[RMDB]
RNA sequence: GGGAACGACUCGAGUAGAGUCGAAAAGGGGAUUGGAAGCUAAGGUUGCAUGUCGGAGUGGGCAGGCUCCGUUAAAAAGCCCAUCUUAUACAAACGCCGAUACUGACGUUUCGUACGCACUGGCAGCUUAAGUCUGCCACGUCUCUAGUCUCUUCGCGUAUCGAAAUCAGUUCGCUGAUUUCGAUACAAAAGAAACAACAACAACAAC
Reactivity to DMS in 0.01 (KOAc 150mM, MgCl2 10mM, bicine 150mM(pH8.5), 24C), signal-to-noise 1, nucleotides 027 to 156: g000g000g010g000a130u030u000g000g020a120a050g010c050u000a050a070g000g000u000u000g030c030a050u000g030u000c030g060g000a100g040u000g000g020g030c020a060g030g000c010u000c030c070g010u000u000a020a070a050a130a100g030c010c020c010a120u010c110u000u000a150u010a060c040a030a030a030c010g020c050c000g000a230u000a060c160u010g030a020c000g000u000u000u000c100g020u000a040c150g030c020a050c060u000g000g020c030a040g000c060u000u000a030a210g030u000c000u010g010c000c010a010c020g040u000c020u000c090u010a140g010u010c000u000c030u000u010c000g030c050
Reactivity to 2A3 in 0.01 (KOAc 150mM, MgCl2 10mM, bicine 150mM(pH8.5), 24C), signal-to-noise 3, nucleotides 027 to 156: g000g010g010g000a050u050u110g010g050a060a030g010c080u080a070a030g070g020u050u050g010c070a030u090g050u080c010g000g000a000g010u020g010g000g000c010a010g020g000c000u000c000c000g060u060u090a030a070a000a000a000g010c000c000c000a030u070c060u110u180a100u050a060c040a010a110a030c050g020c020c020g050a050u060a170c070u130g050a010c000g020u000u060u050c040g010u080a020c060g000c060a020c050u000g020g000c000a000g000c020u180u180a120a070g040u030c000u000g000c040c010a010c050g020u000c000u000c000u050a130g020u030c020u000c000u100u100c040g020c050